The record gives the reactivity of an RNA of 177 nucleotides to DMS and 2A3.

RNA sequence: GGGAACGACUCGAGUAGAGUCGAAAAUCGCGCCAAUCUCGAGCUUAAGCUAGUACAAGGGCAGUUAAACGAGCGCGACUCGUUGAUCGCCGAACAGGGCCUUCUAAUUGUAGCAGUUGAAAAUGCACCUAUGAUGAUCCUUCGGGAUCAUCAUAGGAAAAGAAACAACAACAACAAC
Reactivity to DMS in 0.01 (KOAc 150mM, MgCl2 10mM, bicine 150mM(pH8.5), 24C), signal-to-noise 3, nucleotides 027 to 126: u000c050g060c080g000c030c000a110a100u010c080u000c060g000a060g010c080u000u000a080a120g000c050u000a060g020u000a070c110a080a130g010g000g000c000a040g000u000u010a030a020a040c050g000a050g020c030g040c220g010a130c020u010c040g010u000u000g000a060u000c130g030c020c030g000a050a050c140a030g000g010g010c030c020u010u000c060u010a030a120u010u020g010u000a070g010c040a060g000u000u000g000a100a070a050a100u000g000c140a200
Reactivity to 2A3 in 0.01 (KOAc 150mM, MgCl2 10mM, bicine 150mM(pH8.5), 24C), signal-to-noise 2, nucleotides 027 to 126: u040c000g020c040g000c020c000a010a060u060c020u030c060g040a030g000c040u050u130a080a010g040c050u060a040g070u090a060c040a070a090g000g000g000c040a040g050u100u150a060a060a000c000g000a010g040c150g000c040g240a250c000u010c010g000u000u020g010a080u090c020g000c040c010g050a070a000c030a030g000g000g000c010c000u020u030c030u080a160a170u100u120g060u070a010g020c040a020g040u050u090g150a090a060a030a050u040g000c000a010

The reactions ran in a buffer of 150 mM KOAc, 10 mM MgCl2 and 150 mM bicine (pH 8.5), at 24 C. High DMS reactivity at an A or C suggests that its Watson-Crick edge is free. The 2A3 profile rests on 1,148 reads. 2A3 adducts were read by reverse transcription with SuperScript II with manganese. The data come from the RNA Mapping Database (RMDB), library OK2TST.